Structure probing data (DMS and 2A3) for a 177-nucleotide construct. For DMS the reverse transcriptase was MarathonRT. The RNA was probed in 150 mM KOAc, 10 mM MgCl2 and 150 mM bicine (pH 8.5) at 24 C. For 2A3, 2,726 sequencing reads were counted. 2A3 adducts were read by reverse transcription with SuperScript II with manganese.

[RMDB]
RNA sequence: GGGAACGACUCGAGUAGAGUCGAAAAAUCAGCCAUGCAUGGACAUGCUAGGCUAGGUACGUACCAGACGAUCGAUCGUCCAUGAGUACGUACCGACAUGACUAGAGACAUGGCAGCUAGUGCGUACCCAAGGGCUACAGUUCGCUGUAGCCCUUGGAAAAGAAACAACAACAACAAC
Reactivity to DMS in 0.01 (KOAc 150mM, MgCl2 10mM, bicine 150mM(pH8.5), 24C), signal-to-noise 4, nucleotides 027 to 126: a110u000c080a130g000c010c000a070u000g000c030a110u000g000g010a140c110a040u000g010c050u000a080g020g010c100u000a060g010g020u000a000c000g010u000a000c000c010a100g010a010c010g010a050u010c270g000a120u000c020g020u000c010c150a110u000g000a120g040u000a000c010g030u000a020c010c000g010a080c170a070u000g020a040c000u000a020g000a120g030a220c030a020u000g010g010c020a110g000c090u000a060g000u010g020c040g010u000a110c110
Reactivity to 2A3 in 0.01 (KOAc 150mM, MgCl2 10mM, bicine 150mM(pH8.5), 24C), signal-to-noise 3, nucleotides 027 to 126: a000u080c040a000g010c000c010a050u060g020c010a050u080g040g070a050c000a050u060g030c040u120a110g130g000c050u010a030g030g000u000a000c000g000u000a000c010c000a030g000a000c000g010a040u210c090g140a210u060c020g060u010c090c050a260u110g040a020g030u000a000c010g010u000a000c000c000g000a000c030a040u080g020a010c000u030a020g000a000g050a180c010a030u010g030g040c000a000g020c020u040a050g070u030g150c050g050u090a060c040